[RMDB]
RNA sequence: GGGAACGACUCGAGUAGAGUCGAAAAGAUAUGGAUGUUAGCAAGUUCGCUAUUGAGGUCAACAGCUCUCUCGGAAACGAGAGAGACAUGACUGUAAGUAGCGAAUGAUGACCUAACAUCCUAAGUCCCUCAUAAUAAAGUUCGCUUUAUUAUGAGGAAAAGAAACAACAACAACAAC
Reactivity to DMS in 0.01 (KOAc 150mM, MgCl2 10mM, bicine 150mM(pH8.5), 24C), signal-to-noise 9, nucleotides 027 to 126: g010a090u000a300u010g010g010a010u000g000u000u000a000g000c020a080a120g010u000u000c010g020c010u000a000u000u000g000a220g000g000u000c000a030a090c300a200g000c000u000c000u000c000u000c000g010g010a140a090a230c000g010a020g000a010g010a010g000a010c090a130u000g010a020c000u000g000u020a210a080g010u000a010g000c000g010a010a000u000g010a080u010g000a080c300c000u000a000a000c000a000u000c000c000u000a020a120g000u000c040
Reactivity to 2A3 in 0.01 (KOAc 150mM, MgCl2 10mM, bicine 150mM(pH8.5), 24C), signal-to-noise 8, nucleotides 027 to 126: g060a060u130a070u280g010g000a000u000g010u010u000a010g010c050a290a300g010u010u010c000g000c010u000a020u020u110g070a130g040g010u020c020a040a050c040a300g030c000u010c000u000c000u000c000g040g040a110a090a060c020g000a000g000a000g000a000g010a020c000a040u070g000a000c000u010g040u070a020a020g010u000a000g000c010g000a000a000u000g000a010u020g010a000c020c000u000a000a000c000a000u010c000c000u010a050a030g040u000c010
Structure probing data (DMS and 2A3) for a 177-nucleotide construct.
Reactivities are given for positions 27 through 126.
The DMS profile rests on 26,161 reads.